[RMDB]
RNA sequence: GGGAACGACUCGAGUAGAGUCGAAAAGCCAGAUCCUUCGGGAUCUGGCAAACAAGAGCAUGGUGAGGGCACUUGAUACCUCACCGACAAGCUGAAACACAAAAAGCGGGUCGUUCGCGACCCGCAAGCUAACAAUAUACUUCGGUAUAUUGUUAGCAAAAGAAACAACAACAACAAC
Reactivity to 2A3 in 0.01 (KOAc 150mM, MgCl2 10mM, bicine 150mM(pH8.5), 24C), signal-to-noise 2, nucleotides 027 to 126: g000c010c000a010g000a000u000c000c030u040u130c240g050g000g000a000u010c000u000g010g040c000a000a020a000c010a010a010g080a010g020c030a050u120g000g030u000g000a000g010g020g000c070a050c140u060u070g020a030u100a110c010c010u000c000a000c000c000g000a010c010a060a040g000c000u080g080a120a170a040c110a000c060a090a060a040a030a020g000c010g000g010g010u000c010g010u030u080c130g000c020g140a010c030c210c000g000c010a000a010
Reactivity to DMS in 0.01 (KOAc 150mM, MgCl2 10mM, bicine 150mM(pH8.5), 24C), signal-to-noise 3, nucleotides 027 to 126: g020c000c000a000g010a000u000c000c000u000u030c180g040g010g000a020u000c000u000g000g010c000a000a030a050c060a100a090g000a090g010c010a070u000g010g020u000g000a020g020g000g030c110a150c250u030u030g020a110u010a080c000c000u000c000a010c000c000g010a060c180a080a150g010c030u000g020a110a080a080c130a080c190a060a060a060a080a100g000c010g010g020g030u000c000g030u000u020c170g000c000g000a000c010c010c010g000c020a020a020
Structure probing data (2A3 and DMS) for a 177-nucleotide construct. The data come from the RNA Mapping Database (RMDB), library M2PK50. For DMS the reverse transcriptase was MarathonRT. The DMS profile rests on 3,156 reads.